[RMDB]
RNA sequence: GGGAACGACUCGAGUAGAGUCGAAAAGAUAUGGAACUUAGCAACAGCCAGGUGUCGGAAACGACACACUGGACAUGCUAACUUCCUAAGUCAAACCACUCAACGCUGUUCGCAGCGUUGAGUGGAACUAACCACUGUAGUUCGCUACAGUGGUUAGAAAAGAAACAACAACAACAAC
Reactivity to DMS in 0.01 (KOAc 150mM, MgCl2 10mM, bicine 150mM(pH8.5), 24C), signal-to-noise 5, nucleotides 027 to 126: g010a030u000a190u010g000g000a010a010c100u000u010a010g000c000a040a120c300a180g010c000c000a010g010g020u000g010u000c000g010g000a040a040a090c010g010a010c000a000c000a030c010u000g000g010a070c120a100u000g000c000u000a000a010c110u000u000c000c000u000a040a110g000u000c010a120a110a200c000c010a000c000u000c000a000a010c000g020c010u010g020u000u010c170g020c010a010g000c000g010u000u000g010a000g010u000g000g000a000a060
Reactivity to 2A3 in 0.01 (KOAc 150mM, MgCl2 10mM, bicine 150mM(pH8.5), 24C), signal-to-noise 4, nucleotides 027 to 126: g000a000u040a030u070g000g000a010a000c010u010u010a020g000c010a010a270c100a170g080c000c000a000g000g010u000g000u000c000g020g010a050a020a020c010g010a000c000a000c060a070c010u010g000g080a070c020a060u020g000c000u000a000a000c010u000u000c000c000u010a030a010g020u010c040a060a030a140c000c000a000c000u000c000a010a000c000g000c010u020g100u160u150c300g030c180a000g000c000g000u000u000g000a000g000u000g000g000a010a000